[RMDB]
RNA sequence: GGGAACGACUCGAGUAGAGUCGAAAAGAUAUGGAGCAUGCAUAGACAUGAUCUAAGGGUCGGAAACGACCCGAUGAUCAACAGCUAUGCCGCUGCUCCUAAGUCAAAAGCUUAGUUCGCUAAGCAACUAGGACCUAUUGUUCGCAAUAGGUCCUAGAAAAGAAACAACAACAACAAC
Reactivity to DMS in 0.01 (KOAc 150mM, MgCl2 10mM, bicine 150mM(pH8.5), 24C), signal-to-noise 3, nucleotides 027 to 126: g000a010u000a300u040g020g000a010g000c000a000u010g000c000a020u010a010g000a090c140a300u000g000a010u010c000u000a270a250g000g010g050u000c000g020g000a150a170a270c050g000a020c000c000c000g010a050u020g000a010u000c000a020a060c300a160g020c010u020a000u000g030c000c000g010c010u000g010c000u000c000c000u010a020a090g010u020c040a110a070a120a190g000c010u010u000a030g020u010u020c200g020c020u000a000a010g010c000a090a180
Reactivity to 2A3 in 0.01 (KOAc 150mM, MgCl2 10mM, bicine 150mM(pH8.5), 24C), signal-to-noise 2, nucleotides 027 to 126: g030a000u100a060u200g000g000a000g000c000a040u150g030c000a000u030a000g120a160c050a090u120g000a010u010c000u050a080a190g020g030g020u000c010g080g000a120a090a050c010g000a000c030c030c010g000a010u050g000a000u010c010a010a030c020a010g050c000u010a010u000g000c000c010g030c000u010g000c000u020c000c000u010a060a020g000u020c020a050a030a140a000g000c000u040u000a010g020u030u190c270g050c190u020a000a000g010c000a040a040
Chemical mapping of a 177-nucleotide RNA with DMS and 2A3. It was measured as part of the RMDB library TTRDES. The RNA was probed in 150 mM KOAc, 10 mM MgCl2 and 150 mM bicine (pH 8.5) at 24 C. Values cover nucleotides 27 to 126. In probing experiments dimethyl sulfate is read out at A N1 and C N3, which are open when not base-paired. The DMS profile rests on 1,813 reads.